An RNA of 177 nucleotides, treated with DMS and 2A3 and read out base by base.
In probing experiments dimethyl sulfate is read out at A N1 and C N3, which are open when not base-paired.
The RNA was probed in 150 mM KOAc, 10 mM MgCl2 and 150 mM bicine (pH 8.5) at 24 C.
The DMS profile rests on 1,281 reads.
For DMS the reverse transcriptase was MarathonRT.
The 2A3 profile rests on 1,123 reads.
2A3 is a SHAPE reagent: it acylates the 2'-hydroxyl of flexible nucleotides of all four kinds.
Source: RMDB library OK1LIB, as collected in RNAgym.
Values cover nucleotides 27 to 126.

RNA sequence: GGGAACGACUCGAGUAGAGUCGAAAAUGCUAGCAGCAACCAAUCGUCCCGAUAGAUUGGAUAGUGCAUUGCUCAGACCGGGCAGAUUUAAUCUUACUAUUCAUGUUCCAUUGCCAGACGAGGAGACAUACUGACUCGGCUUCGGCCGAGUCAGUAUAAAAGAAACAACAACAACAAC
Reactivity to DMS in 0.01 (KOAc 150mM, MgCl2 10mM, bicine 150mM(pH8.5), 24C), signal-to-noise 2, nucleotides 027 to 126: u000g110c040u000a070g060c050a090g000c040a090a140c030c010a030a080u000c060g010u000c000c030c000g000a080u030a020g000a020u000u000g000g030a070u030a010g010u010g020c160a100u000u020g000c070u000c050a160g030a130c300c140g020g000g000c080a030g000a080u000u040u040a080a150u010c050u020u000a290c060u000a020u010u000c000a020u030g000u000u030c000c000a010u000u040g030c000c130a040g000a040c030g000a060g000g030a070g030a090c260
Reactivity to 2A3 in 0.01 (KOAc 150mM, MgCl2 10mM, bicine 150mM(pH8.5), 24C), signal-to-noise 2, nucleotides 027 to 126: u150g010c030u010a070g040c050a020g000c000a020a050c020c000a000a100u010c020g050u070c040c030c030g000a130u060a100g080a070u000u020g020g020a030u020a000g020u040g050c030a070u000u200g000c010u020c000a030g040a140c000c060g010g000g040c020a020g010a070u050u110u170a070a050u040c030u090u110a080c000u050a070u090u050c080a070u110g080u090u000c010c010a000u000u040g080c040c010a020g040a030c000g050a020g080g030a030g000a040c080